Chemical mapping of a 177-nucleotide RNA with DMS and 2A3. The RNA was probed in 150 mM KOAc, 10 mM MgCl2 and 150 mM bicine (pH 8.5) at 24 C.
RNA sequence: GGGAACGACUCGAGUAGAGUCGAAAAACUCGCGUACGCGCGAGACUGGACAAAGUUAAAAUGCUAUUCUGUCAUUGUGAUAGUUCAUAUGGGCACUGACAGGAGAGCAUUUUAAUUUUGUCAAGAAUUUUGAUGUUAUCUUCGGAUAACAUCAAAAAAAAGAAACAACAACAACAAC
Reactivity to DMS in 0.01 (KOAc 150mM, MgCl2 10mM, bicine 150mM(pH8.5), 24C), signal-to-noise 4, nucleotides 027 to 126: a150c000u000c000g020c000g020u010a090c150g070c020g000c010g000a010g000a160c040u000g010g010a000c000a020a000a000g000u000u000a010a000a000a010u000g010c000u000a040u000u000c000u000g000u000c000a010u010u000g010u000g000a070u010a050g020u030u040c300a100u020a060u010g000g000g000c000a000c040u010g010a000c010a010g000g000a010g010a010g010c000a000u000u000u000u000a000a000u000u000u000u000g000u000c000a050a050g010a140a110
Reactivity to 2A3 in 0.01 (KOAc 150mM, MgCl2 10mM, bicine 150mM(pH8.5), 24C), signal-to-noise 4, nucleotides 027 to 126: a000c000u000c000g000c010g000u020a060c190g010c000g000c000g120a000g020a020c060u070g060g000a000c000a000a000a000g000u000u010a010a000a000a000u000g000c000u010a030u020u000c000u000g020u010c020a010u080u030g000u000g090a160u080a070g150u090u190c040a040u120a120u220g120g160g030c000a010c040u000g000a000c000a000g000g000a000g000a000g000c000a000u000u000u000u000a000a000u000u000u000u000g000u000c000a000a010g000a010a020